[RMDB]
RNA sequence: GGGAACGACUCGAGUAGAGUCGAAAACUCUGACGCUUCGGCGUCAGAGAAACCUCUAAGCAGAUUGGCGAGGACGACGCUGCGGAGGGCGUUUGCCAACAAAAACGCAUAGAUUCGUCUAUGCGAAUGACGAAGCAUUGUUCGCAAUGCUUCGUCAAAAAGAAACAACAACAACAAC
Reactivity to DMS in 0.01 (KOAc 150mM, MgCl2 10mM, bicine 150mM(pH8.5), 24C), signal-to-noise 1, nucleotides 027 to 126: c000u000c000u000g000a030c010g000c000u000u000c190g060g010c010g010u000c000a000g000a010g000a020a080a140c030c000u000c030u000a100a240g030c110a030g010a030u000u010g000g010c000g000a190g030g030a300c000g000a030c010g000c000u020g000c010g000g000a140g020g000g000c020g000u000u000u010g010c040c030a060a100c150a030a120a100a080a130c010g020c000a010u000a000g000a000u000u030c300g020u030c000u000a000u000g000c000g120a060a050
Reactivity to 2A3 in 0.01 (KOAc 150mM, MgCl2 10mM, bicine 150mM(pH8.5), 24C), signal-to-noise 1, nucleotides 027 to 126: c000u000c000u010g000a000c000g000c000u070u040c230g170g000c000g000u010c000a010g000a000g010a000a000a000c000c010u000c030u090a100a060g050c050a100g070a300u250u220g130g060c050g030a010g050g000a020c000g020a000c000g000c040u010g000c020g040g070a070g010g020g000c020g000u050u050u020g300c000c000a080a010c070a010a180a020a010a010c010g000c000a010u000a010g000a010u000u030c150g000u000c100u000a000u020g000c000g000a030a110
About this RNA
Chemical mapping of a 177-nucleotide RNA with DMS and 2A3. It was measured as part of the RMDB library M2PK50. For 2A3, 1,091 sequencing reads were counted. Conditions: 150 mM KOAc, 10 mM MgCl2 and 150 mM bicine (pH 8.5), 24 C. The DMS profile rests on 666 reads.